Chemical mapping of a 177-nucleotide RNA with DMS and 2A3. For 2A3 the reverse transcriptase was SuperScript II with manganese. Reactivities are given for positions 27 through 126. The DMS profile rests on 21,288 reads. For 2A3, 34,876 sequencing reads were counted.

RNA sequence: GGGAACGACUCGAGUAGAGUCGAAAAUCGUUCGGAGCCAUCGCGUCUUCAGGCCCUGGCCAUGCAAUUCGUGGACAAGGUCACAAAUCUGGUGGACGUCAACGAAAAGGUGUUCGACAUGAAGCAGGCUAUUAAUUUACUUCGGUAAAUUAAUAGCAAAAGAAACAACAACAACAAC
Reactivity to DMS in 0.01 (KOAc 150mM, MgCl2 10mM, bicine 150mM(pH8.5), 24C), signal-to-noise 8, nucleotides 027 to 126: u020c040g020u010u000c030g000g010a110g010c010c010a050u010c090g020c090g010u010c020u010u010c060a090g010g010c010c010c030u000g000g000c010c000a020u020g020c300a160a160u030u030c030g010u010g000g020a040c030a010a050g010g000u010c080a100c180a060a090a090u030c100u020g010g010u010g000g010a020c020g000u010c110a080a110c110g000a040a070a090a070g000g020u010g000u010u000c000g000a060c100a070u020g000a070a100g010c140a070g000
Reactivity to 2A3 in 0.01 (KOAc 150mM, MgCl2 10mM, bicine 150mM(pH8.5), 24C), signal-to-noise 9, nucleotides 027 to 126: u080c030g040u070u020c010g030g010a020g020c010c010a070u060c030g000c020g030u010c010u030u040c040a040g040g000c000c000c000u010g020g000c000c000a010u030g020c040a090a290u210u230c030g010u020g010g000a010c010a030a040g030g000u030c030a040c070a140a150a070u090c070u120g090g020u070g060g020a020c010g020u060c070a110a070c060g070a040a030a030a090g040g000u090g200u050u030c020g010a020c030a080u170g040a050a020g080c100a030g140